[RMDB]
RNA sequence: GGGAACGACUCGAGUAGAGUCGAAAAGAUUCCUCGUUGUUGAGCGAGGUUUAAACAAAUCGACCACACAAACGUAGAGCCGACUACGGAUUUAUAAAUUAAGGCAUUAAGUGUGAUAGGGAGACAAAAAACGAUGUUGUGUUCGCACAACAUCGAAGCAUCUAAUCUACUUCGGUAGAUUAGAUGCAAAAGAAACAACAACAACAAC
Reactivity to 2A3 in 0.01 (KOAc 150mM, MgCl2 10mM, bicine 150mM(pH8.5), 24C), signal-to-noise 5, nucleotides 027 to 156: g080a120u180u130c000c000u000c000g000u000u010g010u000u010g000a010g010c000g000a000g010g010u040u070u030a020a010a010c060a010a010a010u010c000g000a010c020c000a010c000a000c000a020a170a030c010g000u000a010g010a000g010c000c010g040a020c010u000a000c000g000g010a010u010u300u020a190u110a090a030a020u120u140a000a000g000g010c010a020u150u260a190a080g010u000g010u000g000a020u040a030g050g080g020a080g030a030c130a050a120a000a010a030a030c020g000a000u000g000u000u000g000u010g010u040u040c120g030c080a010c000a000a000c000a000u000c000g000a000a000
Reactivity to DMS in 0.01 (KOAc 150mM, MgCl2 10mM, bicine 150mM(pH8.5), 24C), signal-to-noise 2, nucleotides 027 to 156: g030a300u000u000c000c000u000c060g020u000u000g020u010u010g010a100g000c040g000a070g000g000u000u000u010a050a070a110c070a020a090a120u000c010g000a090c020c000a060c000a120c000a150a120a100c020g020u000a030g000a210g000c040c020g030a090c010u000a020c030g000g020a210u000u000u000a030u010a010a050a060u000u000a040a060g020g000c020a300u000u000a040a110g000u000g050u010g000a070u000a070g010g000g000a170g000a120c070a000a060a050a070a090a180c070g020a020u000g020u000u010g040u000g020u000u000c290g000c000a030c000a000a010c010a000u000c000g020a010a080

Notes:
An RNA of 207 nucleotides, treated with 2A3 and DMS and read out base by base. DMS adducts were read by reverse transcription with MarathonRT. The reactions ran in a buffer of 150 mM KOAc, 10 mM MgCl2 and 150 mM bicine (pH 8.5), at 24 C. The DMS profile rests on 3,372 reads. Source: RMDB library M2RFPK, as collected in RNAgym.